[RMDB]
RNA sequence: GGGAACGACUCGAGUAGAGUCGAAAACAUUCUGUGAAGGCAAUUAAAGUGUCAGGGGCCGGUAUUCUGAGGCCCGAGUUGACAAAGAUCAAAGGAAAGAUAAUAACGUUUACUCAAUCUGAUAAGCCGGCAUGAUUAACUUCGGUUAAUCAUGCCGAAAAGAAACAACAACAACAAC
Reactivity to 2A3 in 0.01 (KOAc 150mM, MgCl2 10mM, bicine 150mM(pH8.5), 24C), signal-to-noise 1, nucleotides 027 to 126: c020a000u040u030c010u110g120u010g110a060a040g120g000c000a000a000u020u010a300a090a030g000u110g000u020c000a000g020g020g020g000c000c000g050g180u120a240u090u260c100u290g090a060g000g020c000c020c000g000a000g000u000u090g000a000c000a000a070a000g110a050u100c000a090a000a000g190g130a170a120a000g090a170u010a010a020u090a160a030c060g000u000u100u000a070c000u000c040a000a260u000c010u010g000a020u040a060a040g040c120
This 177-nucleotide RNA was probed chemically with 2A3. Values cover nucleotides 27 to 126. 2A3 adducts were read by reverse transcription with SuperScript II with manganese. Conditions: 150 mM KOAc, 10 mM MgCl2 and 150 mM bicine (pH 8.5), 24 C. For 2A3, 463 sequencing reads were counted.